This 207-nucleotide RNA was probed chemically with 2A3 and DMS. The 2A3 profile rests on 2,347 reads. For DMS, 2,528 sequencing reads were counted. Values cover nucleotides 27 to 156. Conditions: 150 mM KOAc, 10 mM MgCl2 and 150 mM bicine (pH 8.5), 24 C. The data come from the RNA Mapping Database (RMDB), library OK3TST. Values are in units of 0.01, from 0 to 300, in steps of 10.

RNA sequence: GGGAACGACUCGAGUAGAGUCGAAAAGAGGUCCUUCCUGCCGGAAGUGACCGAGCACUCAACAAGUUCAUCACCGAAUACGAUUGGGAUGAGGAUCAGCUCAAUCACGAGCGGUUAGAGGAACUGCAAAAACACGGAGAGACACGCUGGUCACAAAGGUACAUGGUUUUUUCGAAAACCAUGUACCAAAAGAAACAACAACAACAAC
Reactivity to 2A3 in 0.01 (KOAc 150mM, MgCl2 10mM, bicine 150mM(pH8.5), 24C), signal-to-noise 4, nucleotides 027 to 156: g120a050g020g040u020c010c010u000u030c030c010u110g130c100c130g030g070a110a040g030u050g060a000c000c020g000a010g000c010a010c030u050c010a020a110c030a170a040g020u040u010c010a020u010c010a040c030c020g040a100a050u160a160c080g020a020u010u020g020g010g000a010u020g050a080g180g040a110u200c010a030g010c000u000c020a010a010u030c020a040c170g010a020g030c020g000g010u100u160a080g010a000g010g020a010a010c010u060g030c080a030a020a070a050a050c050a020c090g030g010a040g010a010g000a050c000a010c120g000c020u010g020g000u030c000a000c010a060a090a000
Reactivity to DMS in 0.01 (KOAc 150mM, MgCl2 10mM, bicine 150mM(pH8.5), 24C), signal-to-noise 2, nucleotides 027 to 156: g000a200g030g010u000c000c010u000u000c000c000u000g010c210c250g000g010a050a050g060u010g020a020c000c000g000a070g040c080a140c050u000c070a100a110c070a100a110g010u010u000c000a040u010c000a090c020c010g020a050a070u000a140c090g020a040u000u000g020g030g020a040u000g000a170g010g000a210u000c010a080g000c020u000c010a070a030u000c010a040c090g000a220g010c000g000g030u000u000a110g030a070g040g050a040a010c010u000g070c040a050a040a080a070a140c110a120c050g000g000a090g000a080g000a020c060a040c050g040c010u010g060g030u010c020a030c020a060a090a100